[RMDB]
RNA sequence: GGGAACGACUCGAGUAGAGUCGAAAAGGAGUGUGGCCAGAUGAUGACGUUAGAUUCAUCGGUAAAGCGGCGGCCGUGUUGAUCAAUCCACAGAUAUGGCUGACGCGCGGCGGCUAGCAGAUGAGAGUAUAAUACAGCGGUUCGCCGCUGUAUUAUAAAAAGAAACAACAACAACAAC
Reactivity to DMS in 0.01 (KOAc 150mM, MgCl2 10mM, bicine 150mM(pH8.5), 24C), signal-to-noise 9, nucleotides 027 to 126: g000g010a070g010u000g020u010g000g010c020c030a110g020a070u010g000a050u000g010a130c170g020u040u020a100g000a140u020u000c000a010u000c000g010g000u010a050a090a120g000c000g000g010c010g000g020c000c000g030u010g010u010u020g010a160u010c040a040a110u020c020c040a050c220a170g010a140u050a170u010g000g010c300u000g000a030c020g010c010g010c030g010g000c010g000g010c020u000a060g040c020a060g000a070u010g000a090g000a130g010
Reactivity to 2A3 in 0.01 (KOAc 150mM, MgCl2 10mM, bicine 150mM(pH8.5), 24C), signal-to-noise 8, nucleotides 027 to 126: g110g000a090g020u080g010u070g060g010c040c040a050g010a080u050g010a020u040g030a050c140g050u100u070a060g020a150u060u020c000a000u010c010g020g030u130a070a060a010g020c000g020g000c020g070g000c000c010g000u010g030u030u180g060a250u010c030a050a070u050c030c010a060c030a080g130a100u150a080u120g020g000c010u010g000a000c000g010c000g000c000g010g000c020g010g000c010u090a110g000c010a010g010a050u090g010a040g000a000g060